[RMDB]
RNA sequence: GGGAACGACUCGAGUAGAGUCGAAAAGAUUCCUCGUUGUUGAGCGAGGUUUAAACAAAUCGACCACACAAACGUAGAGCUGACUACGGAUUUAUAAAUUAAGGCAUUAAGUGUGAUAAGGAGACAAAAAACGAUGUUGUGUUCGCACAACAUCGAACGUGUGUAUGUUGUUCGCAACAUACACACGAAAAGAAACAACAACAACAAC
Reactivity to 2A3 in 0.01 (KOAc 150mM, MgCl2 10mM, bicine 150mM(pH8.5), 24C), signal-to-noise 6, nucleotides 027 to 156: g090a100u140u110c000c000u000c000g000u010u030g010u010u020g000a000g000c000g000a000g010g000u030u070u050a030a020a010c050a000a000a010u000c000g010a010c010c000a010c000a010c020a080a170a010c010g000u000a000g000a020g050c050u060g070a060c010u020a000c010g000g000a020u020u220u050a170u120a060a090a040u140u160a040a030g040g000c020a020u100u120a130a060g010u010g000u000g030a000u030a070a060g120g010a080g010a030c120a040a130a030a030a010a020c010g000a000u000g000u000u000g010u000g010u040u060c180g070c050a000c000a000a000c000a000u000c000g000a000a000
Reactivity to DMS in 0.01 (KOAc 150mM, MgCl2 10mM, bicine 150mM(pH8.5), 24C), signal-to-noise 2, nucleotides 027 to 156: g020a300u000u000c010c020u000c020g020u000u000g010u000u000g000a120g010c040g020a030g020g030u010u000u000a020a070a160c080a050a060a150u000c020g020a130c040c020a110c060a070c030a070a130a110c020g000u000a020g000a110g050c120u010g000a160c000u000a020c000g000g000a180u000u000u000a060u000a050a070a060u000u000a070a140g020g010c060a100u000u000a010a170g010u000g000u000g000a110u010a030a070g010g030a170g000a090c050a000a050a040a100a040a160c040g020a020u000g020u000u000g020u020g000u000u010c300g000c020a050c020a010a000c000a030u000c010g000a000a010